[RMDB]
RNA sequence: GGGAACGACUCGAGUAGAGUCGAAAAAAAAAAUAGAUCGUUCUAUUAACGAUCUCGCCCGGGUCGUCGGUGGUCGGCGAGCCCACGGACGAACUUACUCGCGCGUAAGUUAAUAAAUCGCCAAAAAGACGUGUAAUUAGUUCGCUAAUUACACGUCAAAAGAAACAACAACAACAAC
Reactivity to 2A3 in 0.01 (KOAc 150mM, MgCl2 10mM, bicine 150mM(pH8.5), 24C), signal-to-noise 2, nucleotides 027 to 126: a020a000a000a000a000a030u110a000g010a010u000c010g020u030u000c130u170a300u300u210a120a000c010g000a000u010c000u000c030g000c020c020c020g020g050g010u020c000g010u000c060g230g010u020g000g020u010c090g000g000c020g000a030g030c030c000c000a000c000g030g000a010c000g000a020a000c000u020u020a030c000u020c080g200c010g000c000g130u010a010a000g000u030u000a000a000u030a030a090a020u000c020g000c020c040a020a080a000a010a030
Reactivity to DMS in 0.01 (KOAc 150mM, MgCl2 10mM, bicine 150mM(pH8.5), 24C), signal-to-noise 2, nucleotides 027 to 126: a000a000a040a100a040a080u000a030g020a020u000c010g000u000u000c280u020a150u000u000a030a020c000g010a020u000c000u000c080g010c000c010c000g020g000g010u000c000g010u010c010g000g030u000g010g000u000c050g010g000c000g020a020g020c220c010c010a030c000g010g000a020c020g000a060a080c000u010u000a000c010u000c190g020c260g010c250g030u010a010a010g000u010u010a060a040u010a010a020a050u000c000g020c010c020a060a100a050a110a090